Structure probing data (DMS and 2A3) for a 177-nucleotide construct. It was measured as part of the RMDB libraries RFM100 and RFMREP.
RNA sequence: GGGAACGACUCGAGUAGAGUCGAAAAUGAAAGUGAAUUUCAGAUGUGAUCCGCAAGGUGCAACAUCGACCAGUCUGGAUCAUUUAUGUGAAGGUACUGAGUAAGAGCAAGUAUGUUAGGACCCGAAAGGUUGAAACCUAUUCGUAGGUUUCAACCUAAAAGAAACAACAACAACAAC
Reactivity to DMS in 0.01 (KOAc 150mM, MgCl2 10mM, bicine 150mM(pH8.5), 24C), signal-to-noise 4, nucleotides 027 to 126: u020g000a050a070a120g010u030g000a120a070u000u000u000c040a080g000a040u010g000u010g010a090u010c020c010g000c270a070a150g000g010u000g020c170a120a040c090a040u010c040g000a100c100c020a040g010u010c040u010g000g010a050u010c000a050u000u010u020a030u020g060u010g020a300a110g020g020u030a040c020u000g000a110g010u020a070a060g000a200g000c050a050a040g040u000a030u010g000u000u000a110g000g010a100c020c010c010g010a070a070
Reactivity to 2A3 in 0.01 (KOAc 150mM, MgCl2 10mM, bicine 150mM(pH8.5), 24C), signal-to-noise 3, nucleotides 027 to 126: u160g010a020a020a010g120u050g060a110a120u030u070u050c020a010g020a060u010g000u000g000a010u010c010c010g000c070a020a070g000g000u030g070c040a040a000c000a080u060c050g000a010c020c010a010g000u000c020u040g000g000a000u000c030a010u080u180u220a200u260g050u000g000a010a040g010g000u120a050c020u040g030a020g090u070a060a020g000a000g070c040a010a010g020u040a060u140g060u030u050a070g030g010a020c000c040c040g050a100a050